[RMDB]
RNA sequence: GGGAACGACUCGAGUAGAGUCGAAAACCUCUGGAGGGGUUCACAUCCCCAACCCGCGGGCCGGCUACUCUUCUUUUCCUUUCCUCGUCUUCAUCGGUCAGCCUUCUGAGUUCCUCUUCUUCCUCCUACAGAGCAGCCUUCGGGCUGCUCAAAAGAAACAACAACAACAAC
Reactivity to 2A3 in 0.01 (KOAc 150mM, MgCl2 10mM, bicine 150mM(pH8.5), 24C), signal-to-noise 2, nucleotides 027 to 129: c010c010u030c020u030g060g020a050g030g040g000g000u090u080c030a040c010a050u100c000c010c010c000a030a070c040c000c010g050c040g000g030g020c000c000g040g000c010u080a060c000u020c000u000u070c010u040u090u030u040c030c000u050u060u030c000c000u010c030g060u070c040u110u060c020a060u000c040g020g000u000c030a050g050c000c000u050u020c020u000g050a030g020u020u050c000c000u050c000u020u000c000u030u010c000c020u000c010c010u070a040c080a030
Reactivity to DMS in 0.01 (KOAc 150mM, MgCl2 10mM, bicine 150mM(pH8.5), 24C), signal-to-noise 4, nucleotides 027 to 129: c000c000u030c050u040g040g020a160g000g000g000g000u020u020c160a130c170a040u020c020c010c000c010a070a070c000c000c000g040c080g010g010g060c000c100g030g020c060u010a080c090u030c070u030u010c050u060u030u010u010c010c000u000u000u000c020c030u020c060g020u080c070u040u020c040a120u040c080g000g060u060c070a000g020c080c050u030u020c050u060g010a080g030u000u000c010c000u020c020u010u070c030u000u030c040c000u020c020c060u040a050c090a100